[RMDB]
This 177-nucleotide RNA was probed chemically with DMS and 2A3.
RNA sequence: GGGAACGACUCGAGUAGAGUCGAAAAGCUGCCAGGCCGACAUCGGGUUCGCCGUUAUCGACCGCUGGAAGCGUGCUGGACGCCAUGCACCGAUGGCUAUCACCGUAUUUUUUAUCGUCUGGAAGGACGUCCCCGAUAUGUUCGCAUAUCGGGGACGAAAAGAAACAACAACAACAAC
Reactivity to DMS in 0.01 (KOAc 150mM, MgCl2 10mM, bicine 150mM(pH8.5), 24C), signal-to-noise 2, nucleotides 027 to 126: g030c020u020g010c010c000a090g010g010c030c000g040a060c050a040u010c020g020g010g020u020u010c160g000c060c010g020u000u000a000u000c020g020a060c090c050g020c160u000g000g010a060a050g030c020g010u000g020c010u000g000g020a120c070g010c030c050a090u000g030c100a110c070c070g020a060u010g000g000c040u000a110u000c060a100c020c030g020u010a000u000u010u020u020u000u000a040u040c030g010u000c030u000g000g030a150a100g010g000a130
Reactivity to 2A3 in 0.01 (KOAc 150mM, MgCl2 10mM, bicine 150mM(pH8.5), 24C), signal-to-noise 1, nucleotides 027 to 126: g000c010u010g050c010c020a000g010g000c000c020g030a040c010a030u060c030g000g000g110u120u120c110g020c060c030g030u030u030a070u110c010g070a050c040c080g020c050u020g050g060a050a010g010c030g010u010g000c080u060g010g020a030c030g020c020c000a050u080g020c010a030c010c000g010a000u050g000g000c030u030a060u150c050a060c090c000g060u050a150u010u220u000u030u060u110a070u080c040g010u000c000u030g030g070a050a060g030g010a000
The data come from the RNA Mapping Database (RMDB), library OK2TST. The 2A3 profile rests on 1,444 reads. The reactions ran in a buffer of 150 mM KOAc, 10 mM MgCl2 and 150 mM bicine (pH 8.5), at 24 C. DMS adducts were read by reverse transcription with MarathonRT. For 2A3 the reverse transcriptase was SuperScript II with manganese.